[RMDB]
RNA sequence: GGGAACGACUCGAGUAGAGUCGAAAACACGAACGUUGGCUAAUCCUGGUCGGACAUCAGGGGGUUAGUGCAAUGGCAUAAGCCAUCUUGGCGCUAAUAGAUACUAAUCGUAGCAUAGCUGAAUAAACGUAUGGAUGCGCUUCGGCGCAUCCAUACGAAAAGAAACAACAACAACAAC
Reactivity to 2A3 in 0.01 (KOAc 150mM, MgCl2 10mM, bicine 150mM(pH8.5), 24C), signal-to-noise 1, nucleotides 027 to 126: c000a010c000g000a180a020c030g000u020u090g130g000c000u020a000a000u000c000c030u000g000g000u160c000g000g000a000c000a090u070c060a080g000g000g000g000g000u000u000a000g000u000g060c030a000a060u000g060g000c060a180u290a160a050g000c000c000a050u000c300u120u040g200g000c000g040c030u000a060a070u090a020g050a000u060a110c060u280a250a000u050c050g000u020a000g000c080a150u030a000g000c000u120g090a050a000u190a000a090a000
Chemical mapping of a 177-nucleotide RNA with 2A3. The reactions ran in a buffer of 150 mM KOAc, 10 mM MgCl2 and 150 mM bicine (pH 8.5), at 24 C. Values are in units of 0.01, from 0 to 300, in steps of 10. The data come from the RNA Mapping Database (RMDB), library OK1LIB.